Conditions: 150 mM KOAc, 10 mM MgCl2 and 150 mM bicine (pH 8.5), 24 C. An RNA of 207 nucleotides, treated with 2A3 and read out base by base. Reactivities are given for positions 27 through 156.
[RMDB]
RNA sequence: GGGAACGACUCGAGUAGAGUCGAAAAAGAGUAAGUGGGAGGAUCUCAAGACAGUACAGAAAGAGUUGGACAUCUAGUUCAGUUUUGCAGAGGGAGUGCAGAGAAACUUCCUUGGAGUUAUAUAAUUGAUUUUUGGAACCUCAUUUGUAGGAUAGUAGACCAUGCUAGGUUUCGACCUAGCAUGGUCAAAAGAAACAACAACAACAAC
Reactivity to 2A3 in 0.01 (KOAc 150mM, MgCl2 10mM, bicine 150mM(pH8.5), 24C), signal-to-noise 1, nucleotides 027 to 156: a000g070a010g010u140a200a000g050u000g070g050g000a050g020g010a070u020c070u010c030a030a010g000a000c110a010g010u050a030c030a000g080a080a090a030g020a000g030u080u100g010g020a000c010a050u030c000u080a050g010u060u070c050a000g000u000u000u130u110g020c050a000g000a010g100g010g000a050g000u040g020c190a010g070a000g000a260a070a000c000u010u000c020c000u000u030g020g000a030g070u180u030a020u090a140u040a210a100u110u000g000a020u010u100u050u050u200g100g000a060a060c010c010u040c040a030u170u140u250g010u140a000g000g080a020u000a030g010u030a000